[RMDB]
RNA sequence: GGGAACGACUCGAGUAGAGUCGAAAACGCCGGGAGGCCCGGCGGUAGACCACCUGCCGCCAGCGCCGGCAGCGCCGCAGCCAGCGUCGCCGGAUCCACCCCCGCCAGACCAGCCGGCAGACCAGCGUAUUGCCUAAAAGUUCGCUUUUAGGCAAUAAAAAGAAACAACAACAACAAC
Reactivity to DMS in 0.01 (KOAc 150mM, MgCl2 10mM, bicine 150mM(pH8.5), 24C), signal-to-noise 2, nucleotides 027 to 126: c150g040c030c020g010g010g010a230g040g020c030c070c140g020g020c020g010g010u000a030g010a210c100c130a110c180c000u000g000c010c020g000c010c020a090g020c120g010c040c010g010g000c010a050g010c010g010c030c040g000c080a120g010c070c090a100g000c010g020u000c040g010c010c010g000g000a120u020c060c060a220c040c030c030c010c020g000c050c110a070g000a100c060c040a070g000c040c000g000g000c010a050g020a090c020c010a060g000c130g000